[RMDB]
RNA sequence: GGGAACGACUCGAGUAGAGUCGAAAAUGACGUUAAACUGCUGACUCAUACAUACUGACACCGGUUGCUCAACAGGCUGUGUGGGACAAUAGAAUAUCAAGGCUGUCAAUUUGAGCUUGACGGCUGCAAAACCUGCAGUACUUCGGUACUGCAGGAACUGUGUGUUUUCGUUCGCGAAAACACACAGAAAAGAAACAACAACAACAAC
Reactivity to 2A3 in 0.01 (KOAc 150mM, MgCl2 10mM, bicine 150mM(pH8.5), 24C), signal-to-noise 2, nucleotides 027 to 156: u120g030a010c080g030u050u100a070a110a040c050u100g020c030u050g020a090c010u020c020a010u010a050c000a030u090a100c010u110g080a020c030a020c080c050g070g000u060u030g020c020u010c040a040a100c020a050g020g010c010u020g020u000g000u010g040g000g030a010c010a030a030u080a060g140a090a100u110a040u110c090a090a020g050g000c020u010g000u000c000a000a020u030u050u180g040a020g010c000u010u000g010a010c010g010g000c000u000g010c030a080a080a000a040c000c000u000g000c000a000g000u000a000c000u030u040c130g080g000u000a010c010u000g000c000a000g000g000a000a000
Structure probing data (2A3) for a 207-nucleotide construct. The RNA was probed in 150 mM KOAc, 10 mM MgCl2 and 150 mM bicine (pH 8.5) at 24 C. The data come from the RNA Mapping Database (RMDB), library M2RFPK. 2A3 adducts were read by reverse transcription with SuperScript II with manganese. For 2A3, 1,375 sequencing reads were counted.